An RNA of 177 nucleotides, treated with DMS and read out base by base. The reactions ran in a buffer of 150 mM KOAc, 10 mM MgCl2 and 150 mM bicine (pH 8.5), at 24 C.

RNA sequence: GGGAACGACUCGAGUAGAGUCGAAAAGAUAUGGAGUACCUUUGUGUCUCUUCUAUGAAGCACGUAACAUCACGGUCGGAAACGACCGUGUGGUGUGGAGAAGGGACACAAAGGUACUCCUAAGUCACAAUAUGGCUUAGUUCGCUAAGCCAUAUUGAAAAGAAACAACAACAACAAC
Reactivity to DMS in 0.01 (KOAc 150mM, MgCl2 10mM, bicine 150mM(pH8.5), 24C), signal-to-noise 6, nucleotides 027 to 126: g010a040u020a300u010g000g000a010g010u000a000c000c000u010u000u000g020u000g010u000c000u010c000u000u000c010u010a210u020g000a230a260g000c000a010c010g020u010a100a220c200a040u020c010a000c010g010g000u010c000g020g000a130a120a240c010g010a010c010c000g040u000g010u010g000g010u000g000u000g010g000a010g010a030a010g000g000g010a010c000a000c000a000a000a000g000g010u000a000c000u000c000c000u000a000a050g010u000c040a270